[RMDB]
Conditions: 150 mM KOAc, 10 mM MgCl2 and 150 mM bicine (pH 8.5), 24 C.
An RNA of 177 nucleotides, treated with DMS and 2A3 and read out base by base.
It was measured as part of the RMDB library RFM100.
Values cover nucleotides 27 to 126.
RNA sequence: GGGAACGACUCGAGUAGAGUCGAAAAUCGCUUCGAGUGUCAGCUCCAGCAACUGUUCGGGCGGAUCAAGGGAGAUUCCGGCGUGGGCGCCAAGCUACAUGGCGAUCGUCGAGAUCCAGGCUCGUACUCAAAGCAAGUGCUUCGGCACUUGCUUUGAAAAAGAAACAACAACAACAAC
Reactivity to DMS in 0.01 (KOAc 150mM, MgCl2 10mM, bicine 150mM(pH8.5), 24C), signal-to-noise 2, nucleotides 027 to 126: u000c130g050c130u000u000c080g000a060g030u020g030u000c010a110g000c010u020c000c050a090g000c110a040a140c200u000g010u040u030c040g000g000g000c000g010g000a040u020c030a020a150g010g000g000a140g040a060u000u000c050c040g000g030c000g010u000g010g000g000c040g010c070c150a030a070g000c050u000a030c100a050u030g040g040c000g030a120u000c000g000u000c020g000a250g000a070u000c020c000a090g010g060c000u010c000g000u000a050c080
Reactivity to 2A3 in 0.01 (KOAc 150mM, MgCl2 10mM, bicine 150mM(pH8.5), 24C), signal-to-noise 3, nucleotides 027 to 126: u060c020g000c040u060u090c070g060a030g000u010g070u120c060a040g000c020u000c000c020a020g070c040a050a140c090u100g050u110u050c000g000g010g010c000g010g030a030u030c050a060a060g170g010g000a130g010a140u250u050c030c020g020g000c020g020u070g050g070g000c000g010c010c060a040a020g020c010u150a200c060a170u120g000g000c000g000a030u020c030g020u030c000g020a040g000a100u030c000c020a070g030g010c000u000c010g040u060a050c000